[RMDB]
Background: Source: RMDB library OK3TST, as collected in RNAgym. Structure probing data (2A3 and DMS) for a 207-nucleotide construct. 2A3 adducts were read by reverse transcription with SuperScript II with manganese. For DMS the reverse transcriptase was MarathonRT. Values cover nucleotides 27 to 156. The reactions ran in a buffer of 150 mM KOAc, 10 mM MgCl2 and 150 mM bicine (pH 8.5), at 24 C. The DMS profile rests on 3,519 reads.
RNA sequence: GGGAACGACUCGAGUAGAGUCGAAAAAUUUUACGUAGCAAAUGUAUUGGCGCGGAGUGUUGGUUAAUUCCAGCGCGCCUUAAUGGUAGUUUAGUGUUUAAAUUUGAUCGCAAUAUCACAAAAUACAGACUAGUUAAACAAGCCCGAAUGGAUGGCCGUAAAACGAGUUAUUCGUAACUCGUUUUACAAAAGAAACAACAACAACAAC
Reactivity to 2A3 in 0.01 (KOAc 150mM, MgCl2 10mM, bicine 150mM(pH8.5), 24C), signal-to-noise 2, nucleotides 027 to 156: a000u100u120u050u110a030c040g000u050a010g040c040a080a140a130u100g020u040a080u050u100g030g010c000g000c020g090g030a160g030u200g080u120u070g030g010u050u150a070a070u270u040c000c000a020g030c000g000c000g020c040c000u010u020a050a030u060g040g000u020a010g020u030u090u100a040g020u010g080u070u070u070a120a180a200u100u110u180g030a050u060c050g000c170a120a030u030a040u160c020a020c020a060a150a010a000u060a000c010a000g070a040c010u040a020g070u070u090a060a070a020c040a100a000g010c000c030c030g030a040a060u040g000g040a030u050g030g000c040c030
Reactivity to DMS in 0.01 (KOAc 150mM, MgCl2 10mM, bicine 150mM(pH8.5), 24C), signal-to-noise 2, nucleotides 027 to 156: a140u000u000u000u000a060c060g030u000a090g000c030a100a060a100u010g010u000a070u010u000g030g020c060g070c070g000g000a070g000u000g060u010u010g010g020u000u000a120a170u000u000c000c000a050g030c000g050c000g040c030c000u010u000a050a080u010g020g020u000a010g010u000u000u000a150g020u000g020u000u010u000a060a070a220u000u010u010g010a060u000c060g030c120a090a100u010a090u010c050a080c030a050a060a030a050u000a020c030a070g020a060c000u000a070g000u000u000a060a020a080c030a040a160g040c020c020c000g000a130a100u010g000g000a080u000g010g000c130c080